[RMDB]
Background:
Structure probing data (2A3 and DMS) for a 177-nucleotide construct. The RNA was probed in 150 mM KOAc, 10 mM MgCl2 and 150 mM bicine (pH 8.5) at 24 C. The 2A3 profile rests on 2,198 reads. Values cover nucleotides 27 to 126. The data come from the RNA Mapping Database (RMDB), library TTRDEL. For DMS the reverse transcriptase was MarathonRT.
RNA sequence: GGGAACGACUCGAGUAGAGUCGAAAAGAUAUGGAAAUCAUGUUAGUGAUGACCUCGGAAACGAGCAAGCUGUCAGCAUGAGUUUCCUAAGUCAAAAGCGGAACAAGUGUUCGCACUUGUUCCGCAAGCCUUUUACGAUGUUCGCAUCGUAAAAGGCAAAAGAAACAACAACAACAAC
Reactivity to 2A3 in 0.01 (KOAc 150mM, MgCl2 10mM, bicine 150mM(pH8.5), 24C), signal-to-noise 2, nucleotides 027 to 126: g030a000u050a020u090g000g040a040a000a020u020c000a000u040g040u180u210a300g070u080g200a140u070g020a130c000c020u030c020g000g020a050a040a020c030g000a000g010c030a130a060g010c040u180g220u300c190a000g000c020a010u010g040a030g080u030u000u010c000c000u020a050a050g010u020c000a000a050a160a030g010c000g000g000a000a000c010a010a000g000u000g050u150u180c300g000c120a000c000u000u000g000u000u050c000c000g000c000a020a000
Reactivity to DMS in 0.01 (KOAc 150mM, MgCl2 10mM, bicine 150mM(pH8.5), 24C), signal-to-noise 2, nucleotides 027 to 126: g030a030u000a280u010g000g000a020a010a050u000c020a010u000g010u020u000a100g020u000g000a070u000g030a110c300c000u020c010g000g010a140a080a100c000g000a020g000c130a080a170g010c000u000g020u010c080a080g020c000a010u000g000a030g000u000u000u000c000c000u000a070a110g010u000c030a040a040a090a150g000c010g000g000a000a010c000a010a000g020u000g020u000u010c220g000c000a000c000u000u000g000u000u000c000c000g000c000a010a020